RNA sequence: GGGAACGACUCGAGUAGAGUCGAAAACUCACGCAGCGCCUCGGUGUAGCUGUCACCGCCGGGAGCACUGGCAAGCUGCUUGAUCCGCACGGUAGGCGCGUGUAGCAGCUUGUCCACCACCCGUCGAUCAGUGAUCCGGUUUCGACCGGAUCACUGAAAAAGAAACAACAACAACAAC
Reactivity to DMS in 0.01 (KOAc 150mM, MgCl2 10mM, bicine 150mM(pH8.5), 24C), signal-to-noise 1, nucleotides 027 to 126: c040u000c030a160c230g010c060a070g020c060g000c040c030u010c150g010g020u000g050u020a060g020c020u000g000u010c200a080c210c000g020c070c010g040g050g020a100g010c070a070c170u000g000g010c120a010a010g000c000u000g020c000u000u010g030a100u020c100c040g010c000a030c050g000g130u000a070g040g010c000g010c040g000u010g000u010a010g020c000a000g010c000u000u000g020u000c000c070a040c130c070a150c020c010c040g000u000c080g000a220